Source information
Chemical mapping of a 207-nucleotide RNA with 2A3. For 2A3 the reverse transcriptase was SuperScript II with manganese. Conditions: 150 mM KOAc, 10 mM MgCl2 and 150 mM bicine (pH 8.5), 24 C. Source: RMDB library VIROID, as collected in RNAgym. As a SHAPE reagent, 2A3 marks flexible, mostly unpaired nucleotides at the ribose 2'-OH.
RNA sequence: GGGAACGACUCGAGUAGAGUCGAAAAAAGCUUCAACGCCUUUUUUUCCUAUCUUCUUUAGCACCGGGCUAGGGAGUAAGCCCGUGGAACCUUAGUUUUGUUCCCUCGGGACUUACUUGUGGUUCCUGUGGUGCACUCCUGACCCUGCUGCUUUGAACGGGUAAAACAAGUUCGCUUGUUUUACCCGAAAAGAAACAACAACAACAAC
Reactivity to 2A3 in 0.01 (KOAc 150mM, MgCl2 10mM, bicine 150mM(pH8.5), 24C), signal-to-noise 2, nucleotides 027 to 156: a000a000g130c190u300u260c130a160a070c070g030c010c050u000u020u080u010u010u080u030c040c010u080a220u040c080u150u040c040u050u120u140a000g000c010a010c060c050g000g010g020c040u060a090g050g040g000a010g020u050a090a000g000c020c020c020g040u030g050g000a000a000c000c000u010u020a020g040u010u190u130u200g110u150u060c000c000c010u060c090g020g000g000a000c000u000u010a010c000u020u040g040u100g070g000u000u020c000c030u030g140u240g020g040u080g010c010a010c000u000c000c000u010g060a060c010c000c000u010g030c050u000g000c000u030u040u040g040a050a040